About this RNA: Conditions: 150 mM KOAc, 10 mM MgCl2 and 150 mM bicine (pH 8.5), 24 C. An RNA of 177 nucleotides, treated with 2A3 and read out base by base.

[RMDB]
RNA sequence: GGGAACGACUCGAGUAGAGUCGAAAAGAAAGAAAGAAGAGUCGGAGUCGUGUACGAAAGUACUCGACUCGAAAGCAUCGAUCGGUGGAAAGAUGCUCGACGAAACAACCACCGAGAAAAAGAAAAAGGCAUAGUGAUUCUUCGGAAUCACUAUGCCAAAAGAAACAACAACAACAAC
Reactivity to 2A3 in 0.01 (KOAc 150mM, MgCl2 10mM, bicine 150mM(pH8.5), 24C), signal-to-noise 1, nucleotides 027 to 126: g080a000a000a000g040a040a030a000g130a030a000g060a060g040u000c000g050g000a000g010u030c000g000u000g000u030a000c030g050a060a020a000g000u000a000c000u000c000g040a040c000u000c010g000a020a000a000g000c000a000u000c000g060a080u030c020g010g020u010g000g030a210a070a000g000a000u020g000c020u000c000g000a000c020g010a000a000a000c040a000a010c000c000a000c000c000g000a010g060a030a110a000a000a000g070a020a110a150a060a000